[RMDB]
RNA sequence: GGGAACGACUCGAGUAGAGUCGAAAAGCAUGGUGGCGCAUGCCUGUAAUCUCAGCUACUCAGGAGGCUGAGGCAGGAGAAUCGUUUGAACCUGAGAGGCAGAAGUUGCAGUGAACUGACAUGAUGCCAUUGCAUUCCAGCCUGGGCAAUAAGAGUGCACCCUCCAACUAUUCGUAGUUGGAGGGUGAAAAGAAACAACAACAACAAC
Reactivity to DMS in 0.01 (KOAc 150mM, MgCl2 10mM, bicine 150mM(pH8.5), 24C), signal-to-noise 2, nucleotides 027 to 156: g020c020a050u000g050g030u000g040g000c040g070c040a060u000g010c020c010u000g030u010a030a060u000c040u000c020a050g010c000u010a160c060u010c080a080g010g010a170g020g020c000u000g010a040g040g030c050a030g030g020a090g000a040a040u000c080g050u010u010u030g010a120a080c020c020u000g020a080g010a150g050g010c030a050g000a070a200g020u000u000g020c000a040g020u000g010a040a120c060u000g000a120c070a110u010g000a090u000g040c030c030a080u000u060g020c030a050u000u000c030c070a100g010c000c060u000g010g020g030c070a010a050u000a060a080g000a120g020u000g020
Reactivity to 2A3 in 0.01 (KOAc 150mM, MgCl2 10mM, bicine 150mM(pH8.5), 24C), signal-to-noise 2, nucleotides 027 to 156: g020c020a030u070g000g000u000g040g000c040g000c070a020u020g030c000c010u070g020u100a100a260u040c010u000c030a000g020c010u020a050c010u020c050a060g070g000a080g020g080c010u020g020a000g080g000c000a000g040g060a050g040a060a080u080c060g080u050u120u180g070a030a030c010c000u040g000a020g000a000g050g000c040a040g000a100a040g110u150u050g000c020a020g040u030g130a070a030c030u040g070a040c040a090u090g000a060u100g120c040c000a020u050u000g000c000a010u070u000c020c010a010g020c030c000u000g000g020g000c040a040a030u050a130a010g060a020g090u030g020